[RMDB]
RNA sequence: GGGAACGACUCGAGUAGAGUCGAAAAUUUGAAUACUUUACAGACAUGAUGCCUCUCCUGCAUAAUUAUGUGACAAUAGAUACAGAUACCUUACUAUCAAAUGCAAAACAUUUAGAAAUUCUUUUUACAAUGUGUAGGAAGGUACUAUGUGGAGAUGCUAUUGCAGAAACUUCGGUUUCUGCAAUAGAAAAGAAACAACAACAACAAC
Reactivity to 2A3 in 0.01 (KOAc 150mM, MgCl2 10mM, bicine 150mM(pH8.5), 24C), signal-to-noise 4, nucleotides 027 to 156: u150u070u140g070a050a030u130a190c020u060u080u110a050c070a060g110a040c000a060u090g060a110u030g060c000c010u070c020u000c020c000u000g000c010a010u040a090a140u300u130a100u150g040u020g020a020c040a070a120u090a150g030a020u090a080c010a080g080a040u030a070c030c050u110u150a070c060u050a050u080c020a040a030a060u040g040c020a020a050a150a100c010a060u050u060u140a150g040a060a130a050u140u110c000u030u050u010u000u000a020c010a040a050u050g000u000g000u010a000g010g000a000a000g020g000u000a010c000u000a000u020g010u040g050g040a080g000a020u120g040
Reactivity to DMS in 0.01 (KOAc 150mM, MgCl2 10mM, bicine 150mM(pH8.5), 24C), signal-to-noise 2, nucleotides 027 to 156: u000u030u000g010a190a080u000a110c070u000u030u020a140c030a250g010a070c020a070u010g020a150u010g000c030c010u000c050u000c040c020u010g000c010a040u000a090a060u000u010a050u030g050u000g010a080c050a070a050u010a030g010a110u010a230c080a140g030a150u010a020c010c040u000u000a050c050u020a060u010c030a060a100a150u010g010c020a050a070a030a300c050a050u010u010u000a120g000a060a070a230u000u000c050u000u010u000u000u010a030c050a060a190u000g020u010g000u000a010g000g010a030a010g000g000u000a010c050u000a000u000g000u000g020g000a120g010a070u000g010